This 177-nucleotide RNA was probed chemically with 2A3 and DMS. The DMS profile rests on 6,737 reads. The reactions ran in a buffer of 150 mM KOAc, 10 mM MgCl2 and 150 mM bicine (pH 8.5), at 24 C. The data come from the RNA Mapping Database (RMDB), library OK1LIB. Values are in units of 0.01, from 0 to 300, in steps of 10. For DMS the reverse transcriptase was MarathonRT. The 2A3 profile rests on 4,389 reads. Reactivities are given for positions 27 through 126.
RNA sequence: GGGAACGACUCGAGUAGAGUCGAAAAGCGAAGAGAAUGGCCAUUUUAGGUGACACAGCCUGGGAUUUUGGAUCCUUGGGAGGAGUGUUUACAUCUAUAGGAAAGGCUCUCCACCAAGUCUAUGGAGCAGUAGGCCAUUAUUCGUAAUGGCCUACUGAAAAGAAACAACAACAACAAC
Reactivity to 2A3 in 0.01 (KOAc 150mM, MgCl2 10mM, bicine 150mM(pH8.5), 24C), signal-to-noise 4, nucleotides 027 to 126: g050c030g030a070a010g040a030g080a110a130u150g070g040c020c040a130u060u070u050u090a020g020g010u030g020a030c010a010c000a060g070c010c000u030g000g000g000a020u040u080u110u240g170g080a010u020c010c000u050u150g030g010g020a130g070g040a190g010u010g020u020u030u070a060c010a020u010c010u030a070u060a110g020g140a070a140a000g020g000c000u000c000u000c030c010a010c000c020a030a040g030u010c030u090a150u120g050g000a020g060
Reactivity to DMS in 0.01 (KOAc 150mM, MgCl2 10mM, bicine 150mM(pH8.5), 24C), signal-to-noise 4, nucleotides 027 to 126: g010c070g000a100a040g010a070g010a100a030u010g000g000c030c040a100u020u020u000u020a030g010g010u000g000a090c080a040c060a120g010c030c010u000g020g010g000a030u000u010u060u040g020g010a040u010c060c010u010u020g000g000g000a080g020g010a170g030u000g010u000u020u030a130c070a040u020c020u000a030u010a050g010g010a070a080a080g000g030c030u020c010u000c030c030a150c050c070a060a070g000u030c090u010a130u010g000g010a090g020